[RMDB]
RNA sequence: GGGAACGACUCGAGUAGAGUCGAAAAUUACGAUGUCCGAGUUUGCUCAACUACCUUUUUACGAUAUUGCUAGACUUAGUUCAAUGGUUAUGUCAGGAGGUAACCCCAAUAUGUAUCCAAACAUUCCGCCAGUGGACCUUUUCGAAGGUCCACUGGCAAAAGAAACAACAACAACAAC
Reactivity to 2A3 in 0.01 (KOAc 150mM, MgCl2 10mM, bicine 150mM(pH8.5), 24C), signal-to-noise 2, nucleotides 027 to 126: u300u030a090c070g000a090u170g020u020c070c020g070a000g000u000u130u180g050c050u090c120a010a000c000u050a000c000c000u080u000u000u160u300a070c020g100a080u040a000u050u040g080c050u130a050g020a110c070u210u110a020g070u240u190c070a000a110u130g000g070u050u110a040u090g160u040c050a060g000g040a000g020g020u070a070a070c000c000c000c000a000a000u070a040u060g020u010a020u000c040c000a030a040a020c070a180u200u040c000c140